[RMDB]
RNA sequence: GGGAACGACUCGAGUAGAGUCGAAAAGAUAUGGAGGCAUGGGAGACUAGUGUCGGAAACGACACGAAAGUCAUCGAUCAUGCUCCUAAGUCAAAUCUCCACAUCCGGUUCGCCGGAUGUGGAGAAACUAGUAGGAUAAGUUCGCUUAUCCUACUAGAAAAGAAACAACAACAACAAC
Reactivity to 2A3 in 0.01 (KOAc 150mM, MgCl2 10mM, bicine 150mM(pH8.5), 24C), signal-to-noise 3, nucleotides 027 to 126: g000a000u030a020u100g000g030a030g110g300c000a000u000g010g000g000a050g000a020c020u080a150g000u000g000u010c000g000g000a060a030a020c010g000a000c020a030c010g010a090a040a000g010u010c010a060u300c040g020a030u030c010a000u000g000c000u010c000c000u020a060a010g010u000c020a010a050a260u030c010u010c000c000a000c000a000u000c000c010g060g060u090u090c270g070c110c000g000g000a000u010g000u010g010g000a000g000a000a000a000
Reactivity to DMS in 0.01 (KOAc 150mM, MgCl2 10mM, bicine 150mM(pH8.5), 24C), signal-to-noise 5, nucleotides 027 to 126: g000a040u010a190u010g000g000a070g000g020c010a010u000g000g010g010a040g010a020c000u010a280g000u000g010u000c000g010g000a040a050a110c000g020a010c000a010c010g000a060a100a090g020u000c010a180u000c150g000a070u010c010a000u000g010c010u010c000c000u000a030a170g000u000c020a070a090a150u000c010u000c000c000a000c000a000u000c000c010g010g000u010u010c260g020c000c010g000g000a010u000g010u000g000g000a000g000a000a010a080

This 177-nucleotide RNA was probed chemically with 2A3 and DMS.
The data come from the RNA Mapping Database (RMDB), library TTRDEL.
For 2A3, 10,106 sequencing reads were counted.
Conditions: 150 mM KOAc, 10 mM MgCl2 and 150 mM bicine (pH 8.5), 24 C.
For DMS the reverse transcriptase was MarathonRT.